This 177-nucleotide RNA was probed chemically with 2A3 and DMS. For DMS the reverse transcriptase was MarathonRT. The data come from the RNA Mapping Database (RMDB), library OK1LIB. The reactions ran in a buffer of 150 mM KOAc, 10 mM MgCl2 and 150 mM bicine (pH 8.5), at 24 C.
[RMDB]
RNA sequence: GGGAACGACUCGAGUAGAGUCGAAAACAAAAGAAAAACUUAGAAAAUGUUUUAGCUAAUAAUGGUAAUACAGAGGUGAUUUCACCGACAUUAUUCGUAUUAUUGAUGUAUUUACUAUCAAUGAUUACAUGCCUAUCGGAUUCGUCCGAUAGGCAUGAAAAGAAACAACAACAACAAC
Reactivity to 2A3 in 0.01 (KOAc 150mM, MgCl2 10mM, bicine 150mM(pH8.5), 24C), signal-to-noise 4, nucleotides 027 to 126: c000a000a060a030a050g290a020a100a020a000a010c060u060u130a110g150a090a120a060a100u120g050u010u040u040u050a000g000c000u000a000a000u020a000a000u000g000g180u180a100a080u160a280c100a050g190a090g100g000u010g030a290u120u140u300c000a000c000c000g000a000c000a000u010u000a000u000u000c040g000u040a000u060u000a000u000u100g000a000u010g030u030a220u130u300u260a040c000u010a020u000c000a000a000u000g010a000u010u110a020
Reactivity to DMS in 0.01 (KOAc 150mM, MgCl2 10mM, bicine 150mM(pH8.5), 24C), signal-to-noise 2, nucleotides 027 to 126: c050a070a140a140a160g000a050a170a050a080a150c110u060u010a090g070a140a090a180a070u010g000u010u000u000u000a070g030c030u050a030a070u000a040a010u000g000g020u010a100a160u010a150c110a000g030a060g000g040u000g010a210u040u050u000c000a000c000c000g010a000c030a000u020u010a010u000u000c240g000u000a030u000u000a000u000u000g000a010u010g010u000a060u000u010u080a050c060u030a040u010c030a000a000u000g000a000u000u000a110